The record gives the reactivity of an RNA of 177 nucleotides to 2A3 and DMS. Reactivities are given for positions 27 through 126. For DMS the reverse transcriptase was MarathonRT. For 2A3, 1,118 sequencing reads were counted. The reactions ran in a buffer of 150 mM KOAc, 10 mM MgCl2 and 150 mM bicine (pH 8.5), at 24 C. Source: RMDB library OK2TRN, as collected in RNAgym.
[RMDB]
RNA sequence: GGGAACGACUCGAGUAGAGUCGAAAAUAUCCCUGCGCUAGGGAAUCAGCCAUACAGCAACACUACCAUCAACUUUGAGUAGGGUAAUCUCUUGAAGGGCCAAUGUCUGUCUACAAGGUUGAGCAGGAUCAGCAGAUACGUUCGCGUAUCUGCUGAUAAAAGAAACAACAACAACAAC
Reactivity to 2A3 in 0.01 (KOAc 150mM, MgCl2 10mM, bicine 150mM(pH8.5), 24C), signal-to-noise 1, nucleotides 027 to 126: u170a060u000c000c000c010u050g020c140g000c040u040a010g040g020g090a020a120u100c030a030g020c000c000a060u140a100c070a070g020c000a030a040c020a030c060u020a080c000c020a080u050c000a110a080c020u000u040u150g040a050g040u140a050g000g050g040u050a030a070u050c020u020c000u050u120g080a110a050g060g010g040c040c000a000a010u100g010u050c000u030g050u020c000u040a090c030a050a040g000g040u040u040g020a020g080c060a050g000g030
Reactivity to DMS in 0.01 (KOAc 150mM, MgCl2 10mM, bicine 150mM(pH8.5), 24C), signal-to-noise 2, nucleotides 027 to 126: u020a130u000c000c000c000u000g000c110g030c120u000a050g000g000g020a110a110u000c080a110g000c010c050a080u020a070c180a090g010c080a090a120c060a040c080u000a070c030c030a060u000c040a040a130c050u000u010u000g020a100g010u000a100g000g020g000u000a050a070u010c020u000c020u000u000g020a110a050g010g000g010c050c120a020a060u000g020u000c040u000g000u020c050u020a090c100a060a030g010g000u000u000g000a070g020c080a080g010g000